RNA sequence: GGGAACGACUCGAGUAGAGUCGAAAAGUGUCGGGGGCUUAUGCGACUGCUCGCCCGGGGCCGUCAGCGGUCGCCGAGCAGGCUGACCAUCCCGGCCGCGUCGGGAAUGACGUGCACGACAUCCGACGCUAGUAUCGGCGUUCGCGCCGAUACUAGCAAAAGAAACAACAACAACAAC
Reactivity to 2A3 in 0.01 (KOAc 150mM, MgCl2 10mM, bicine 150mM(pH8.5), 24C), signal-to-noise 2, nucleotides 027 to 126: g100u130g000u040c000g020g000g000g030g070c040u140u090a060u170g010c030g070a090c090u040g030c000u000c040g050c060c060c040g030g050g000g020c000c040g040u060c040a060g120c010g030g000u040c030g030c200c000g010a020g040c040a010g070g000c010u050g000a010c000c010a040u060c010c020c000g000g040c000c040g020c030g040u020c000g060g070g090a090a190u120g010a020c030g010u090g000c060a030c130g140a020c040a020u000c010c030g030a030c050
Reactivity to DMS in 0.01 (KOAc 150mM, MgCl2 10mM, bicine 150mM(pH8.5), 24C), signal-to-noise 3, nucleotides 027 to 126: g010u000g010u000c010g000g000g000g010g010c300u010u000a050u000g010c000g000a130c060u000g000c030u000c090g040c060c030c040g000g000g000g000c010c050g020u010c200a130g000c060g030g000u000c010g020c010c020g000a080g020c050a140g000g000c000u010g020a150c300c020a150u000c030c010c000g000g010c030c080g010c070g010u010c000g000g000g010a120a120u010g000a080c060g010u010g000c100a190c050g020a090c080a100u000c010c010g000a110c080
Structure probing data (2A3 and DMS) for a 177-nucleotide construct.
The DMS profile rests on 2,294 reads.
For 2A3, 2,125 sequencing reads were counted.
Conditions: 150 mM KOAc, 10 mM MgCl2 and 150 mM bicine (pH 8.5), 24 C.
For DMS the reverse transcriptase was MarathonRT.